[RMDB]
RNA sequence: GGGAACGACUCGAGUAGAGUCGAAAAAUACUUCUCAGGAUGGCGCGUUGCAGUCCAACAAGAUCCAGGGACUGUCCAGAAUUUUCCUAUACCUCGAGUCGGGUUUGGAAUCUAAGGUUGACUCGCUAAAACUUUACGUGGUUCGCCACGUAAAGAACCUUUACUAAAGCUUCGGCUUUAGUAAAGGAAAAGAAACAACAACAACAAC
Reactivity to 2A3 in 0.01 (KOAc 150mM, MgCl2 10mM, bicine 150mM(pH8.5), 24C), signal-to-noise 2, nucleotides 027 to 156: a000u150a040c030u040u000c020u010c050a040g090g020a080u090g020g030c030g000c020g080u070u140g010c010a000g010u010c020c010a060a100c050a040a150g090a130u080c050c050a040g060g000g010a010c000u010g040u010c010c020a040g070a270a070u010u020u000u060c010c000u030a040u060a120c030c010u030c020g010a020g030u020c020g010g000g000u010u040u020g020g020a050a020u010c030u050a080a090g090g000u040u060g030a010c000u010c030g040c020u060a060a100a040a120c010u010u000u000a000c000g000u000g000g020u010u020c060g030c050c000a000c000g000u000a000a000a000g000a000a010
Reactivity to DMS in 0.01 (KOAc 150mM, MgCl2 10mM, bicine 150mM(pH8.5), 24C), signal-to-noise 1, nucleotides 027 to 156: a120u010a030c050u020u010c050u010c060a110g070g000a080u000g030g040c040g010c030g110u000u010g070c020a140g000u000c010c020a050a150c010a100a200g020a050u000c030c000a160g030g000g000a020c010u010g000u000c070c050a110g000a070a070u000u000u000u000c020c020u010a100u000a080c050c030u000c010g010a050g080u000c060g000g040g040u030u020u010g000g010a110a060u010c100u000a110a030g000g020u000u010g000a040c100u010c020g070c070u000a060a040a100a100c000u000u000u000a010c020g000u000g030g050u000u020c300g000c010c000a010c000g040u000a000a010a000g020a010a070